[RMDB]
RNA sequence: GGGAACGACUCGAGUAGAGUCGAAAAGAAAACAUAGCUAUCGAAGAAAGAAAGAAACACACACACGAGAUAGCUAUGGAAAAGCCGGAAAAAGAGUGUGUGUGGAAAGAGGAAACUCGAACGGCGAGGGAUAUCAUAACUUCGGUUAUGAUAUCCCAAAAGAAACAACAACAACAAC
Reactivity to DMS in 0.01 (KOAc 150mM, MgCl2 10mM, bicine 150mM(pH8.5), 24C), signal-to-noise 2, nucleotides 027 to 126: g000a140a090a040a060c000a000u000a030g010c000u010a000u000c000g010a050a110g010a150a090a090g000a160a120a070g000a120a090a010c010a000c000a010c010a000c000a050c060g000a140g000a000u000a000g000c000u010a000u000g000g000a010a060a070a110g020c000c000g020g040a020a020a160a110a130g000a120g000u000g000u000g000u010g000u010g020g030a080a060a160g000a110g000g000a070a120a010c000u000c000g000a090a170c080g000g000c000g020a110
Reactivity to 2A3 in 0.01 (KOAc 150mM, MgCl2 10mM, bicine 150mM(pH8.5), 24C), signal-to-noise 3, nucleotides 027 to 126: g060a030a060a000a000c000a000u000a000g000c010u000a010u020c030g060a050a030g080a090a190a030g130a050a170a020g140a090a200a000c010a000c000a000c000a000c000a020c000g020a000g000a100u010a000g000c010u000a000u000g000g030a000a060a000a000g000c000c000g000g100a100a110a020a070a010g080a040g030u000g000u000g010u000g000u020g000g070a050a220a000g080a020g080g070a130a000a000c010u020c040g000a080a020c010g060g000c020g020a150
Chemical mapping of a 177-nucleotide RNA with DMS and 2A3.
2A3 adducts were read by reverse transcription with SuperScript II with manganese.
For 2A3, 1,836 sequencing reads were counted.
For DMS, 2,334 sequencing reads were counted.